[RMDB]
RNA sequence: GGGAACGACUCGAGUAGAGUCGAAAAUGAGGCGUAACCCCACUUUGCUGAAGCACUUCAGACCAAUCCUGGAGGACACCCUGGAAGAGAAGCUCGAAAGCAUGGGGAUAAGGAAGGAUGCAAAGGGCGUCAUCUGACCAUUCGUGGUCAGAUGACGAAAAGAAACAACAACAACAAC
Reactivity to 2A3 in 0.01 (KOAc 150mM, MgCl2 10mM, bicine 150mM(pH8.5), 24C), signal-to-noise 1, nucleotides 027 to 126: u030g010a000g000g090c080g060u080a070a050c030c000c050c000a040c090u090u090u150g020c000u090g010a050a030g050c050a060c070u010u020c030a020g010a130c130c110a010a030u140c050c000u060g030g000a040g040g030a020c010a020c040c040c000u060g000g050a070a010g040a030g030a100a000g010c000u020c100g000a120a000a000g040c030a030u100g000g000g000g060a000u020a020a010g040g040a070a000g040g050a020u050g020c000a000a090a050g090g000g010
Reactivity to DMS in 0.01 (KOAc 150mM, MgCl2 10mM, bicine 150mM(pH8.5), 24C), signal-to-noise 2, nucleotides 027 to 126: u000g000a030g000g030c040g000u010a070a090c030c000c050c090a080c070u000u000u020g000c060u010g020a190a110g000c080a090c040u000u000c050a010g000a130c100c170a050a130u000c050c040u000g000g000a130g000g000a180c130a080c040c030c000u000g030g000a100a050g000a060g000a050a060g000c040u010c110g020a060a100a050g020c060a050u000g000g020g010g010a100u000a050a040g040g010a020a030g000g000a050u020g020c070a020a040a080g000g000g010
The record gives the reactivity of an RNA of 177 nucleotides to 2A3 and DMS. The data come from the RNA Mapping Database (RMDB), library OK2TRN. The reactions ran in a buffer of 150 mM KOAc, 10 mM MgCl2 and 150 mM bicine (pH 8.5), at 24 C. DMS adducts were read by reverse transcription with MarathonRT.